[RMDB]
The data come from the RNA Mapping Database (RMDB), library M2PK50.
An RNA of 177 nucleotides, treated with DMS and 2A3 and read out base by base.
2A3 is a SHAPE reagent: it acylates the 2'-hydroxyl of flexible nucleotides of all four kinds.
For 2A3, 1,415 sequencing reads were counted.
The RNA was probed in 150 mM KOAc, 10 mM MgCl2 and 150 mM bicine (pH 8.5) at 24 C.
For DMS the reverse transcriptase was MarathonRT.
The DMS profile rests on 1,293 reads.
RNA sequence: GGGAACGACUCGAGUAGAGUCGAAAAGAGUCACACUUCGGUGUGACUCAAAUAAGCUGACCAGCAAUGAGGUCUACAUCGUCAUGCACAAAUAGAAUAAAAAAACCCUAAUCUUCGGAUUAGGGAAGAAGUCCUAUUAGUUCGCUAAUAGGACUUCAAAAGAAACAACAACAACAAC
Reactivity to DMS in 0.01 (KOAc 150mM, MgCl2 10mM, bicine 150mM(pH8.5), 24C), signal-to-noise 2, nucleotides 027 to 126: g000a000g000u010c030a000c000a000c020u010u020c190g050g030u000g010u000g000a000c000u000c000a000a030a060u000a040a160g020c080u000g000a050c010c030a180g010c060a070a090u000g020a060g000g010u020c070u010a080c130a030u000c110g000u000c030a030u000g020c020a140c130a080a060a090u000a080g010a110a090u020a010a020a060a070a060a080a120c000c000c000u000a010a020u000c000u000u030c200g000g000a010u000u000a020g020g000g020a040a000
Reactivity to 2A3 in 0.01 (KOAc 150mM, MgCl2 10mM, bicine 150mM(pH8.5), 24C), signal-to-noise 2, nucleotides 027 to 126: g000a000g020u000c010a000c000a000c010u050u100c210g060g010u010g000u040g010a000c000u000c000a010a000a020u000a000a000g120c030u020g030a040c010c010a000g040c010a050a270u070g010a010g030g030u000c050u080a050c030a210u120c100g060u020c010a030u020g020c060a040c030a140a040a010u150a110g090a070a060u280a250a100a030a010a030a090a040c020c010c000u020a000a010u000c010u000u100c280g010g010a000u000u010a000g010g060g000a010a010